[RMDB]
RNA sequence: GGGAACGACUCGAGUAGAGUCGAAAAGAUAUGGACAGUAACGCUCUUUGAUCUCAUGUAGACCUUAAUUAUAUCGGAAACGAUAUAAUUAAGGAACUUAAUGAGGGAGAGCGCCCUGUCCUAAGUCGUGUAGUUACUUGUUCGCAAGUAACUACACAAAAGAAACAACAACAACAAC
Reactivity to DMS in 0.01 (KOAc 150mM, MgCl2 10mM, bicine 150mM(pH8.5), 24C), signal-to-noise 2, nucleotides 027 to 126: g000a120u000a300u030g030g000a020c010a010g010u000a170a260c000g020c000u000c000u000u000u000g020a080u000c000u000c010a000u000g030u000a030g010a230c000c000u000u000a020a020u000u000a000u000a010u000c000g000g010a200a130a250c000g010a010u000a010u000a020a000u000u000a000a000g000g030a030a000c020u000u010a090a020u000g030a030g030g000g000a000g000a000g000c010g020c160c230c000u000g010u000c000c000u000a030a120g000u000c100
Reactivity to 2A3 in 0.01 (KOAc 150mM, MgCl2 10mM, bicine 150mM(pH8.5), 24C), signal-to-noise 3, nucleotides 027 to 126: g090a060u180a080u230g010g010a000c010a010g010u100a300a050c090g020c010u020c000u300u300u130g130a160u070c010u020c010a000u050g040u060a030g030a120c000c000u000u050a000a000u010u000a010u000a010u000c020g050g000a110a080a050c030g000a010u000a000u000a020a010u000u010a000a000g000g010a000a020c000u000u190a090a010u000g000a000g000g010g020a020g000a000g000c000g010c000c000c010u000g000u000c000c010u010a180a040g250u180c120